[RMDB]
RNA sequence: GGGAACGACUCGAGUAGAGUCGAAAACGAGGGGGUGCUGACGUCGACGGCCGACGCCAACAUCGGCUCGAUCAUGGGCAUCGGCUUCCCGCCGUGGACAGGUGGCAGUGCCCAGUUCAUCGUCGGCGGCUACACCAAUUUUCGAAUUGGUGUAGCCAAAAGAAACAACAACAACAAC
Reactivity to DMS in 0.01 (KOAc 150mM, MgCl2 10mM, bicine 150mM(pH8.5), 24C), signal-to-noise 2, nucleotides 027 to 126: c030g000a080g000g010g050g020g040u000g000c020u000g000a110c040g010u000c020g000a050c130g000g000c010c100g000a060c080g020c100c130a080a140c160a160u010c060g010g000c030u000c090g010a090u000c110a140u000g000g000g000c010a070u000c020g010g000c070u000u000c060c010c030g000c030c070g020u010g000g000a090c110a100g000g000u000g000g010c060a140g010u000g000c000c010c010a070g010u010u020c030a120u010c020g000u000c000g000g010c150
Reactivity to 2A3 in 0.01 (KOAc 150mM, MgCl2 10mM, bicine 150mM(pH8.5), 24C), signal-to-noise 1, nucleotides 027 to 126: c050g010a070g060g110g040g000g000u060g020c030u000g010a030c000g000u030c010g080a010c050g030g020c010c000g040a030c030g030c030c030a080a020c030a150u130c050g060g040c030u040c100g020a080u070c060a150u070g010g050g040c020a060u110c100g050g000c030u060u040c000c010c010g030c030c030g060u110g010g050a040c010a050g020g120u070g120g000c030a040g010u000g020c000c010c000a000g010u020u060c060a080u030c030g110u060c020g010g010c020